[RMDB]
RNA sequence: GGGAACGACUCGAGUAGAGUCGAAAAGCAACUUAGGAUUUUAGGCUCCCCGUGCGUGUCUCGAACCAUGCCGGGCCAAACCCACGGGGGCUGGCGGCCCCCGUGCGGUCAAAAUCAAACCGCUGGAAAAACAGUUCUAGCUUCGGCUAGAACUGAAGAAAUAACUUCACUUCGGUGAAGUUAUUUCAAAAGAAACAACAACAACAAC
Reactivity to 2A3 in 0.01 (KOAc 150mM, MgCl2 10mM, bicine 150mM(pH8.5), 24C), signal-to-noise 1, nucleotides 027 to 156: g010c010a040a120c080u090u120a080g080g090a110u160u160u040u100a060g010g030c060u120c070c020c010c060g060u160g040c050g020u090g010u000c080u090c290g040a080a040c080c000a020u010g000c020c000g000g010g000c010c010a040a040a000c000c000c000a060c000g000g000g000g010g000c000u010g020g020c000g000g010c000c000c000c000c000g000u000g000c080g000g000u010c000a010a010a020a070u030c020a000a020a140c030c000g010c020u030g110g000a110a050a020a000a000c000a000g010u000u000c000u020a000g010c000u080u020c190g100g000c000u010a000g010a000a000c000u010g000a000a000
Chemical mapping of a 207-nucleotide RNA with 2A3. It was measured as part of the RMDB library M2RFPK. Values cover nucleotides 27 to 156.